[RMDB]
RNA sequence: GGGAACGACUCGAGUAGAGUCGAAAAGAGCCCCUUCGGGGGCUCAAAUCAGGGGUCAUCGAAGUCGAACUACCACAAUGAUGUGCUGAAGCCUCCACGGCAUUGAGUGGCGCCGAGAUGACGGAGGCACCCGUCCUAUCUGGUUUCGACCAGAUAAGUAAUCUGAACAGUUCGCUGUUCAGAUUACAAAAGAAACAACAACAACAAC
Reactivity to 2A3 in 0.01 (KOAc 150mM, MgCl2 10mM, bicine 150mM(pH8.5), 24C), signal-to-noise 3, nucleotides 027 to 156: g020a000g020c040c010c040c070u020u150c270g070g010g000g000g000c000u000c000a000a000a000u040c000a010g070g010g030g060u020c000a020u020c030g010a080a030g100u080c030g090a200a140c140u160a070c140c030a020c020a060a260u180g060a060u110g060u040g030c040u050g040a120a000g000c000c000u000c000c000a030c010g010g000c010a030u050u110g040a070g050u040g000g020c020g010c000c010g020a040g000a070u070g000a040c070g000g000a010g000g010c010a030c000c020c020g050u050c000c010u020a020u000c000u010g040g020u050u060u110c170g030a020c010c000a000g000a010u000a030a000